[RMDB]
Structure probing data (2A3 and DMS) for a 177-nucleotide construct. DMS adducts were read by reverse transcription with MarathonRT. It was measured as part of the RMDB library OK2TRN. 2A3 adducts were read by reverse transcription with SuperScript II with manganese. Conditions: 150 mM KOAc, 10 mM MgCl2 and 150 mM bicine (pH 8.5), 24 C.

RNA sequence: GGGAACGACUCGAGUAGAGUCGAAAAAAAUAUCAUGUACUAUGGUCUUACAUACUGCAGUGUCAUAUGGAGUACAUAAUAUUGGAAAUACCUUCUUCUCAUGAAGAGCUCCAGAUGUGUAUGAGAGAGCUAUCACCUAAUUCGUUAGGUGAUAGCUAAAAGAAACAACAACAACAAC
Reactivity to 2A3 in 0.01 (KOAc 150mM, MgCl2 10mM, bicine 150mM(pH8.5), 24C), signal-to-noise 3, nucleotides 027 to 126: a000a000a000u090a000u050c030a020u030g000u010a040c020u030a050u070g130g000u070c020u050u080a050c010a020u040a020c050u070g070c010a120g140u010g070u220c010a020u020a040u140g070g020a030g030u020a000c010a010u080a070a040u050a090u050u030g030g040a050a100a050u120a100c010c000u010u010c000u060u010c010u040c040a080u140g010a020a030g020a030g040c030u040c020c010a060g010a180u120g090u000g030u100a050u060g010a030g010a010g010
Reactivity to DMS in 0.01 (KOAc 150mM, MgCl2 10mM, bicine 150mM(pH8.5), 24C), signal-to-noise 5, nucleotides 027 to 126: a070a010a030u000a000u000c010a010u000g000u000a010c010u000a090u010g010g000u000c080u010u000a080c050a040u000a040c160u000g020c070a170g020u010g010u010c040a040u010a040u000g010g000a060g010u000a020c030a010u010a030a020u010a040u000u000g000g010a070a050a110u000a110c090c020u010u000c020u000u000c030u000c060a070u010g010a050a060g000a090g020c120u010c020c040a070g010a090u010g020u000g020u000a030u000g010a080g010a090g000